[RMDB]
RNA sequence: GGGAACGACUCGAGUAGAGUCGAAAACUACUUUGGGCAGCGGCCGAGCCAUGAGCUGAUGGUGCGCUGGACCCAGGUGAACGCGCUGAUGCCGGCCAUGCAGUUCAGCAUCGCGCCCUGGGACCUCCUUGAGACGGACAUUCGUGUCCGUCUCAAGAAAAGAAACAACAACAACAAC
Reactivity to 2A3 in 0.01 (KOAc 150mM, MgCl2 10mM, bicine 150mM(pH8.5), 24C), signal-to-noise 2, nucleotides 027 to 126: c000u080a000c000u210u070u030g090g060g060c030a030g000c010g050g000c050c030g010a030g000c010c050a300u300g040a090g040c020u030g010a290u120g060g050u210g100c050g010c030u030g000g020a030c020c000c050a010g000g050u260g120a150a070c120g030c000g000c100u240g000a010u020g000c040c030g060g010c090c040a240u290g220c080a130g090u100u300c040a020g000c000a000u000c000g000c020g000c000c010c020u010g000g050g020a070c010c010u060c000
Reactivity to DMS in 0.01 (KOAc 150mM, MgCl2 10mM, bicine 150mM(pH8.5), 24C), signal-to-noise 1, nucleotides 027 to 126: c050u000a050c080u000u010u000g020g000g000c030a040g050c030g000g000c050c010g000a020g040c000c030a150u010g000a200g020c040u000g000a080u000g000g060u000g030c000g040c050u010g010g020a110c000c020c000a020g020g070u010g000a110a140c160g020c050g010c010u020g000a000u000g040c040c120g000g020c020c140a120u000g010c100a170g000u000u000c090a060g000c000a010u000c000g000c000g020c010c010c000u010g000g000g000a260c100c020u040c040
An RNA of 177 nucleotides, treated with 2A3 and DMS and read out base by base. For 2A3, 958 sequencing reads were counted.